About this RNA: This 177-nucleotide RNA was probed chemically with DMS and 2A3. 2A3 adducts were read by reverse transcription with SuperScript II with manganese. For DMS the reverse transcriptase was MarathonRT.
RNA sequence: GGGAACGACUCGAGUAGAGUCGAAAAGGAUGCAACGUAGUAAUAUGUGUGACUUCUACCUCUUGAGUCACACAUUACUAGUCGUAGUGCGAUUCAAGAGGUAGAUCGCGUUACGACCGUUGUAUCGCUACUACUGACAAUUCGUUGUUAGUAGUAGAAAAGAAACAACAACAACAAC
Reactivity to DMS in 0.01 (KOAc 150mM, MgCl2 10mM, bicine 150mM(pH8.5), 24C), signal-to-noise 9, nucleotides 027 to 126: g010g010a010u000g010c000a000a000c010g010u000a280g000u000a020a030u000a070u010g030u010g020u000g000a040c190u010u000c030u000a030c020c020u000c020u000u000g000a020g010u000c000a020c020a030c010a040u000u000a010c020u000a130g010u010c220g010u000a030g010u000g010c050g000a010u000u000c020a020a030g000a030g010g010u000a020g000a010u000c010g020c010g010u000u000a010c020g000a130c300c040g000u000u000g010u000a010u000c000g010
Reactivity to 2A3 in 0.01 (KOAc 150mM, MgCl2 10mM, bicine 150mM(pH8.5), 24C), signal-to-noise 9, nucleotides 027 to 126: g040g000a000u000g000c000a000a000c010g010u010a010g000u010a030a040u040a030u140g200u030g020u030g080a060c050u060u000c000u020a020c000c000u010c000u000u010g000a000g000u000c000a010c000a000c000a020u010u010a000c000u030a020g140u060c060g000u010a010g000u000g000c010g000a000u010u010c010a010a010g010a010g050g000u010a000g000a000u000c000g000c000g000u010u010a000c010g010a020c060c040g000u000u000g000u000a000u000c000g000
Values cover nucleotides 27 to 126. For DMS, 116,279 sequencing reads were counted.